About this RNA: Source: RMDB library TTRDEL, as collected in RNAgym. Structure probing data (DMS and 2A3) for a 177-nucleotide construct. DMS adducts were read by reverse transcription with MarathonRT. Values are in units of 0.01, from 0 to 300, in steps of 10. The RNA was probed in 150 mM KOAc, 10 mM MgCl2 and 150 mM bicine (pH 8.5) at 24 C.

[RMDB]
RNA sequence: GGGAACGACUCGAGUAGAGUCGAAAAGAUAUGGACGAAGAGCAACAGCUACAGGUCGGAAACGACCUAAGUAGACAUGCUUGUAUGUCCUAAGUCAAACGAACAUGCACUUCGGUGCAUGUUCGAACGUAAUCUCGACGUUCGCGUCGAGAUUACGAAAAGAAACAACAACAACAAC
Reactivity to DMS in 0.01 (KOAc 150mM, MgCl2 10mM, bicine 150mM(pH8.5), 24C), signal-to-noise 2, nucleotides 027 to 126: g000a000u010a080u000g020g000a000c000g010a190a280g010a000g000c000a040a080c180a200g010c000u000a000c060a040g000g010u000c000g010g000a030a020a080c000g010a010c000c000u000a000a050g020u000a010g010a040c100a070u000g000c000u000u020g000u010a190u010g000u000c000c000u000a010a060g000u000c020a070a120a260c040g010a010a000c000a000u000g000c000a030c000u000u000c230g030g010u000g020c000a000u000g000u010u000c000g000a020a010
Reactivity to 2A3 in 0.01 (KOAc 150mM, MgCl2 10mM, bicine 150mM(pH8.5), 24C), signal-to-noise 2, nucleotides 027 to 126: g010a000u020a010u070g000g010a000c020g070a140a070g000a020g050c080a060a210c090a300g020c000u000a010c000a000g010g000u000c000g000g010a020a030a010c010g030a000c000c000u020a050a030g000u000a000g060a070c040a140u100g000c000u060u100g090u100a060u300g010u000c020c000u010a010a000g030u020c000a110a060a060c010g000a000a000c000a000u010g020c020a010c030u060u090c300g130g010u000g000c000a000u010g000u000u010c010g000a010a000
For DMS, 1,730 sequencing reads were counted.